[RMDB]
RNA sequence: GGGAACGACUCGAGUAGAGUCGAAAAGAUAUGGAAUCUCCCACGGGAGCUACAGGUCGGAAACGACCUGCUAGCUUUGAUCGUGGAGAUUCCUAAGUCAAAACAGGUAAUCUUCGGAUUACCUGAAGUAAUGUCUAUUGUUCGCAAUAGACAUUACAAAAGAAACAACAACAACAAC
Reactivity to DMS in 0.01 (KOAc 150mM, MgCl2 10mM, bicine 150mM(pH8.5), 24C), signal-to-noise 7, nucleotides 027 to 126: g010a030u000a300u010g000g000a020a010u000c000u000c110c040c060a060c040g010g000g010a020g030c000u000a020c000a000g000g000u000c000g010g000a060a070a190c010g010a000c000c000u000g000c300u000a000g000c000u000u000u010g010a110u010c030g020u010g010g010a020g000a010u000u000c000c000u000a000a050g000u000c030a140a090a160a260c010a000g000g000u000a000a010u000c000u000u020c270g030g000a010u000u000a000c000c000u000g010a010a080
Reactivity to 2A3 in 0.01 (KOAc 150mM, MgCl2 10mM, bicine 150mM(pH8.5), 24C), signal-to-noise 5, nucleotides 027 to 126: g010a020u050a020u100g000g000a010a000u010c010u060c070c070c020a010c030g090g050g080a120g010c010u010a010c000a010g000g010u000c000g020g000a060a030a040c010g000a000c000c000u000g020c020u000a000g000c000u020u060u160g020a020u020c000g010u000g000g000a010g010a010u000u000c000c000u000a020a000g010u000c030a010a020a130a180c010a010g000g010u000a010a000u000c010u080u190c300g170g000a000u000u000a010c010c000u000g000a020a000

This 177-nucleotide RNA was probed chemically with DMS and 2A3. For DMS, 14,291 sequencing reads were counted. The reactions ran in a buffer of 150 mM KOAc, 10 mM MgCl2 and 150 mM bicine (pH 8.5), at 24 C. Source: RMDB library TTRDES, as collected in RNAgym.